[RMDB]
RNA sequence: GGGAACGACUCGAGUAGAGUCGAAAAGAUCUUGGAAUUGAGGUGAUUAUUCCAAAUGAUGCAAAUCGGAAAAUAGUACAUAGCAUUAUCUAUGACGAGCUUUGUUUAGGUGUGAUCAACCCCGAUAGGGUAGUAGGUACUUCGGUACCUACUACCCAAAAGAAACAACAACAACAAC
Reactivity to 2A3 in 0.01 (KOAc 150mM, MgCl2 10mM, bicine 150mM(pH8.5), 24C), signal-to-noise 1, nucleotides 027 to 126: g030a010u050c040u030u040g050g090a090a060u100u070g040a050g000g080u080g030a040u010u030a010u020u040c020c000a020a000a000u050g000a040u050g000c040a050a020a060u050c030g030g130a070a060a020a040u130a060g030u100a040c060a120u050a030g070c030a100u070u070a060u130c000u000a050u040g000a010c000g000a010g060c060u050u040u050g010u070u010u060a080g010g000u040g000u020g010a000u000c020a010a270c010c040c000c000g090a060u140a100
Reactivity to DMS in 0.01 (KOAc 150mM, MgCl2 10mM, bicine 150mM(pH8.5), 24C), signal-to-noise 2, nucleotides 027 to 126: g010a080u020c030u000u000g000g000a080a060u000u000g010a060g030g030u000g000a040u000u000a040u000u000c000c010a020a040a040u010g000a010u000g000c050a020a070a060u000c030g000g030a150a120a080a040u000a040g030u000a010c060a120u000a120g010c040a020u000u000a030u000c020u010a160u030g010a020c030g000a300g000c010u000u000u010g000u010u000u000a090g030g000u010g000u010g000a010u010c050a020a070c010c000c010c020g030a060u010a100